Structure probing data (2A3 and DMS) for a 177-nucleotide construct.
RNA sequence: GGGAACGACUCGAGUAGAGUCGAAAACGGAACUUCGGUUCCGAGUUUGUGUAGAGGUAAGAAAUAUGCUGUGUUCUCGCUUGGUAUAUUUCUUGCCUCUACCAAUUAUGGGCACGCUUCGGCGUGCACCCCCAUAAGAGUUCGCUCUUAUGGGGGUAAAAGAAACAACAACAACAAC
Reactivity to 2A3 in 0.01 (KOAc 150mM, MgCl2 10mM, bicine 150mM(pH8.5), 24C), signal-to-noise 3, nucleotides 027 to 126: c010g010g020a010a000c010u060u080c230g110g000u010u000c010c010g000a050g040u060u080u040g070u010g000u010a000g010a010g000g000u010a010a000g000a000a000a010u010a000u010g000c010u020g010u010g050u210u150c140u060c170g020c030u040u110g000g000u010a000u000a000u010u000u000c000u000u010g000c000c000u000c000u010a000c000c000a010a000u020u000a050u090g060g040g020c000a000c010g000c010u040u050c170g110g000c000g000u000g000c000
Reactivity to DMS in 0.01 (KOAc 150mM, MgCl2 10mM, bicine 150mM(pH8.5), 24C), signal-to-noise 7, nucleotides 027 to 126: c020g010g000a000a000c000u000u010c210g040g010u000u000c000c000g000a060g010u000u000u000g010u010g020u000a000g010a010g000g010u000a010a000g000a010a020a010u000a000u000g000c000u000g010u000g000u000u000c190u010c280g010c070u010u000g000g010u000a010u000a010u000u000u000c000u000u000g000c000c000u000c000u000a000c000c000a020a030u010u010a080u010g010g010g010c000a010c000g010c000u000u020c220g020g010c000g010u000g010c010
The reactions ran in a buffer of 150 mM KOAc, 10 mM MgCl2 and 150 mM bicine (pH 8.5), at 24 C.